Record summary:
An RNA of 177 nucleotides, treated with DMS and read out base by base. Values cover nucleotides 27 to 126. For DMS the reverse transcriptase was MarathonRT. The DMS profile rests on 5,937 reads.

[RMDB]
RNA sequence: GGGAACGACUCGAGUAGAGUCGAAAAGAUAUGGAACCACAAUAACCAUUCAUGGGUGGCUAGAAGGUCAUCGGAAACGAUGACACUUCUUGGACCCACCAUGAAUGGUUAUUGUGGUUCCUAAGUCGAUUUACAAAUAGUUCGCUAUUUGUAAAUCAAAAGAAACAACAACAACAAC
Reactivity to DMS in 0.01 (KOAc 150mM, MgCl2 10mM, bicine 150mM(pH8.5), 24C), signal-to-noise 3, nucleotides 027 to 126: g010a090u010a300u000g000g010a010a010c000c000a020c000a010a010u000a000a010c010c000a000u000u000c000a010u010g000g020g020u000g000g010c080u000a010g020a010a010g010g010u000c000a000u010c000g000g000a130a130a250c010g020a010u010g000a020c000a080c000u000u000c010u000u000g040g000a180c300c010c030a030c000c000a000u000g000a010a000u000g000g000u000u000a000u000u000g040u010g000g000u000u000c000c000u000a010a070g000u010c110